[RMDB]
RNA sequence: GGGAACGACUCGAGUAGAGUCGAAAAGAUAUGGAUGAAGAACUACUUGUACGUUGCCAUCGAUCAUGUCUCUACUCGGAAACGAGUAGAGACAUGGGAGGCAAUGUACAAGCUUCAUCCUAAGUCACACCGCUUCUAAGUUCGCUUAGAAGCGGUGAAAAGAAACAACAACAACAAC
Reactivity to DMS in 0.01 (KOAc 150mM, MgCl2 10mM, bicine 150mM(pH8.5), 24C), signal-to-noise 2, nucleotides 027 to 126: g010a040u000a230u020g000g010a000u000g020a040a010g000a040a090c060u020a300c030u010u000g000u000a020c000g000u000u000g000c000c000a270u000c160g000a080u000c000a000u000g000u010c000u000c000u020a020c010u000c000g020g000a030a100a130c000g030a040g000u000a000g000a020g000a000c000a000u010g000g020g000a050g010g000c000a020a000u000g050u000a000c000a000a030g020c020u000u000c000a000u000c000c010u000a020a080g010u000c020a300
Reactivity to 2A3 in 0.01 (KOAc 150mM, MgCl2 10mM, bicine 150mM(pH8.5), 24C), signal-to-noise 2, nucleotides 027 to 126: g030a030u060a030u180g020g010a000u010g000a010a020g000a050a040c120u300a070c020u300u020g000u000a000c020g020u000u020g030c030c020a300u300c180g090a200u180c020a000u010g000u000c030u060c010u020a000c000u000c000g000g000a060a050a010c010g010a000g030u000a000g000a010g000a010c000a000u000g000g000g010a010g010g000c000a000a010u000g030u010a000c000a000a000g010c010u000u000c000a000u000c000c010u000a030a020g000u000c000a000
Annotation:
The data come from the RNA Mapping Database (RMDB), library TTRINS. Structure probing data (DMS and 2A3) for a 177-nucleotide construct. 2A3 is a SHAPE reagent: it acylates the 2'-hydroxyl of flexible nucleotides of all four kinds. DMS adducts were read by reverse transcription with MarathonRT. For DMS, 1,805 sequencing reads were counted. The reactions ran in a buffer of 150 mM KOAc, 10 mM MgCl2 and 150 mM bicine (pH 8.5), at 24 C. For 2A3 the reverse transcriptase was SuperScript II with manganese.